[RMDB]
RNA sequence: GGGAACGACUCGAGUAGAGUCGAAAAAUCCGAGAUGGCCACACUUUUGAGGAGCUUAGCAUUGUUCAAAAGAAACAAGGACAAACCACCCAUUACAUCAGGAUCCGGUGGAGCCAUCAGAGGAAUCCACCGAGGGAGACUUCGGUCUCCCUCGGUGAAAAGAAACAACAACAACAAC
Reactivity to DMS in 0.01 (KOAc 150mM, MgCl2 10mM, bicine 150mM(pH8.5), 24C), signal-to-noise 2, nucleotides 027 to 126: a260u000c000c000g000a300g000a060u000g000g030c030c080a200c080a100c000u000u000u030u010g000a010g010g000a030g000c000u040u000a300g000c090a240u000u000g000u000u060c040a030a020a000a020g000a180a020a070c130a050a240g300g000a130c110a120a300a260c070c300a050c100c000c040a300u000u020a030c100a040u020c230a100g010g000a250u030c000c080g000g040u000g000g000a200g000c000c000a030u030c030a080g000a300g000g000a000a210u000c140
Reactivity to 2A3 in 0.01 (KOAc 150mM, MgCl2 10mM, bicine 150mM(pH8.5), 24C), signal-to-noise 2, nucleotides 027 to 126: a000u000c000c010g000a000g000a000u020g000g000c040c000a070c020a010c010u000u040u100u160g030a080g000g090a040g000c050u060u080a000g050c050a300u090u030g070u120u000c030a020a050a030a050g070a050a260a030c080a040a110g000g020a030c020a020a160a000c070c000a110c000c000c020a090u090u200a160c070a120u240c080a170g090g000a030u020c050c000g070g000u000g010g000a000g040c000c000a000u000c000a000g060a050g030g020a000a000u070c000

This 177-nucleotide RNA was probed chemically with DMS and 2A3. For 2A3, 1,006 sequencing reads were counted. 2A3 adducts were read by reverse transcription with SuperScript II with manganese. The reactions ran in a buffer of 150 mM KOAc, 10 mM MgCl2 and 150 mM bicine (pH 8.5), at 24 C. It was measured as part of the RMDB library OK1LIB. For DMS the reverse transcriptase was MarathonRT.